Annotation: Structure probing data (DMS and 2A3) for a 177-nucleotide construct. It was measured as part of the RMDB library OK2TST. DMS adducts were read by reverse transcription with MarathonRT. 2A3 adducts were read by reverse transcription with SuperScript II with manganese. Conditions: 150 mM KOAc, 10 mM MgCl2 and 150 mM bicine (pH 8.5), 24 C.

RNA sequence: GGGAACGACUCGAGUAGAGUCGAAAACAGGCAGCCAGUGACCAGGGCUGAGAACUUGCCCAGACCACUAGUCUCCUCAUUGAGACAGCAAACAGACUCAGUUUUUCAGCAUCUCAGGGAGCCUGCAGUAGUUGUACAGCUUCGGCUGUACAACUACAAAAGAAACAACAACAACAAC
Reactivity to DMS in 0.01 (KOAc 150mM, MgCl2 10mM, bicine 150mM(pH8.5), 24C), signal-to-noise 1, nucleotides 027 to 126: c100a040g000g010c090a100g030c040c030a020g020u000g020a040c090c090a070g020g000g030c010u000g010a130g030a030a090c090u000u000g000c010c010c030a060g010a090c090c060a040c060u000a060g020u000c030u000c030c080u020c230a060u000u000g010a030g000a010c050a100g010c060a030a010a040c200a040g000a020c090u000c050a060g000u000u000u000u030u000c080a110g000c010a190u000c010u000c000a060g000g010g060a130g000c010c070u000g000c170a080
Reactivity to 2A3 in 0.01 (KOAc 150mM, MgCl2 10mM, bicine 150mM(pH8.5), 24C), signal-to-noise 1, nucleotides 027 to 126: c040a010g070g060c020a020g020c040c020a020g070u020g080a090c060c060a030g000g000g000c030u000g000a030g020a050a040c080u060u080g000c010c020c050a050g020a030c000c040a030c060u050a020g030u030c010u010c010c030u120c010a170u140u180g010a020g020a000c020a000g020c030a040a100a050c030a030g090a050c040u050c160a060g020u050u010u000u070u080c040a060g000c020a070u000c020u040c070a000g000g050g000a000g050c010c000u070g000c030a060